[RMDB]
RNA sequence: GGGAACGACUCGAGUAGAGUCGAAAAAUGCAUAGUCCUGAUGUUAUAGUAGGUGACUAUGUCAUUAUUAGUGAAAAAUUGUUUGUGCGUAGUAAGGAAGAAGACGGAUUUGCCUUCUACCCUGCUUAAACAGGCGAGUUCGCUCGCCUGAAAAGAAACAACAACAACAAC
Reactivity to DMS in 0.01 (KOAc 150mM, MgCl2 10mM, bicine 150mM(pH8.5), 24C), signal-to-noise 5, nucleotides 027 to 129: a000u020g000c050a060u030a020g030u020c000c050u010g000a110u050g070u080u060a140u040a280g110u030a220g000g030u030g040a030c010u010a060u020g050u070c030a040u000u030a150u000u040a090g010u000g020a000a000a010a020a020u090u000g010u080u020u000g020u020g020c130g030u020a010g040u000a080a120g080g000a220a010g000a020a000g030a070c040g050g050a250u020u060u030g030c020c010u040u030c000u030a020c000c000c000u080g010c010u030u030a020a090a100
Reactivity to 2A3 in 0.01 (KOAc 150mM, MgCl2 10mM, bicine 150mM(pH8.5), 24C), signal-to-noise 2, nucleotides 027 to 129: a000u000g000c010a010u010a000g030u000c000c000u050g050a130u090g130u140u300a080u020a240g000u000a010g000g000u080g000a010c000u000a000u040g070u000c060a000u000u060a050u050u070a060g020u050g120a020a000a010a010a030u030u090g050u080u000u120g020u000g000c070g050u000a000g090u080a020a010g000g000a000a000g000a000a000g030a020c070g150g090a050u030u070u300g080c000c000u000u000c000u000a020c000c000c000u010g000c000u000u080a010a010a010